[RMDB]
RNA sequence: GGGAACGACUCGAGUAGAGUCGAAAAGAUAUGGAGUUGAACUACGCUUUGGUACGCGAAGAACACGGACUACUCUCGGAAACGAGAGUAGUCCGUGGGAGCGUACUGAAGCGCAACUCCUAAGUCACUUAUCCUGAUUCUUCGGAAUCAGGAUAAGAAAAGAAACAACAACAACAAC
Reactivity to DMS in 0.01 (KOAc 150mM, MgCl2 10mM, bicine 150mM(pH8.5), 24C), signal-to-noise 1, nucleotides 027 to 126: g010a040u000a300u030g000g030a000g030u010u000g010a100a120c190u020a300c000g000c000u000u010u000g010g000u000a000c010g000c010g010a100a160g000a100a260c000a010c000g000g000a010c010u000a000c000u000c000u030c010g010g010a150a130a270c010g020a000g000a020g020u000a010g010u000c000c010g000u000g000g000g000a100g020c000g000u000a010c020u000g000a010a010g010c010g010c000a020a050c000u020c000c010u000a040a070g020u010c030a300
An RNA of 177 nucleotides, treated with DMS and read out base by base. It was measured as part of the RMDB library TTRINS. The RNA was probed in 150 mM KOAc, 10 mM MgCl2 and 150 mM bicine (pH 8.5) at 24 C. Values are in units of 0.01, from 0 to 300, in steps of 10.